Structure probing data (DMS and 2A3) for a 177-nucleotide construct. For 2A3 the reverse transcriptase was SuperScript II with manganese. The RNA was probed in 150 mM KOAc, 10 mM MgCl2 and 150 mM bicine (pH 8.5) at 24 C. Values are in units of 0.01, from 0 to 300, in steps of 10. For DMS the reverse transcriptase was MarathonRT.
RNA sequence: GGGAACGACUCGAGUAGAGUCGAAAAUAGAGUUACUUCUCAUCCUCACCAUUCAUUUUUUUAAGAUCUAAUGGUUAAAAUUAGUUACUUAUUACAACCAUUAGAUUUUAAGAAAAUGAAUGAUGAGGACUUUGACAUGUUUCGACAUGUCAAAGUCAAAAGAAACAACAACAACAAC
Reactivity to DMS in 0.01 (KOAc 150mM, MgCl2 10mM, bicine 150mM(pH8.5), 24C), signal-to-noise 2, nucleotides 027 to 126: u040a080g000a100g030u020u020a060c190u030u010c010u010c060a180u020c020c000u000c000a000c050c000a000u000u000c000a010u000u000u040u000u000u000u000a010a010g000a000u000c010u000a000a000u000g000g010u000u010a060a140a030a060u000u020a060g010u020u060a190c120u040u010a020u000u010a120c250a040a020c010c000a000u000u000a000g010a000u000u000u000u000a000a000g000a000a000a000a000u000g000a000a000u000g010a020u000g000a010g000
Reactivity to 2A3 in 0.01 (KOAc 150mM, MgCl2 10mM, bicine 150mM(pH8.5), 24C), signal-to-noise 6, nucleotides 027 to 126: u180a010g120a010g080u130u120a090c040u080u020c020u000c010a070u030c000c000u000c000a000c000c000a000u000u000c000a000u000u000u000u000u000u000u000a000a000g000a010u000c000u000a000a000u010g000g030u010u030a080a200a060a080u070u070a020g130u100u110a140c040u080u100a070u080u050a070c050a010a000c000c000a000u000u000a000g000a000u000u000u000u000a000a000g000a000a000a000a000u000g000a000a000u000g000a000u000g000a000g000